[RMDB]
RNA sequence: GGGAACGACUCGAGUAGAGUCGAAAAUGACGGCUAUCGCAUCUAUGGGCGGCUAUCGGUUGAACCUGACGCCGAGCGAGCCGCUUGGGCUCUGGCGUAUCGUGGCUCUCCAGCGUCCGGUCGAGGCGGCGCCCGUAGUAUUCGUACUACGGGCGCCAAAAGAAACAACAACAACAAC
Reactivity to 2A3 in 0.01 (KOAc 150mM, MgCl2 10mM, bicine 150mM(pH8.5), 24C), signal-to-noise 1, nucleotides 027 to 126: u210g000a010c050g020g050c100u140a100u240c010g010c010a040u070c110u130a190u180g010g030g010c010g000g080c010u050a050u110c030g100g000u020u100g080a100a020c050c040u020g020a000c000g000c000c020g050a060g050c030g070a050g000c000c000g050c030u010u050g100g070g000c000u020c060u110g120g000c000g030u020a030u080c140g040u060g000g000c050u010c000u000c000c000a040g000c000g000u000c000c000g030g020u100c000g010a000g060g000c030
Source information:
Structure probing data (2A3) for a 177-nucleotide construct. The RNA was probed in 150 mM KOAc, 10 mM MgCl2 and 150 mM bicine (pH 8.5) at 24 C. The data come from the RNA Mapping Database (RMDB), library OK1LIB. Values are in units of 0.01, from 0 to 300, in steps of 10. Values cover nucleotides 27 to 126. 2A3 adducts were read by reverse transcription with SuperScript II with manganese.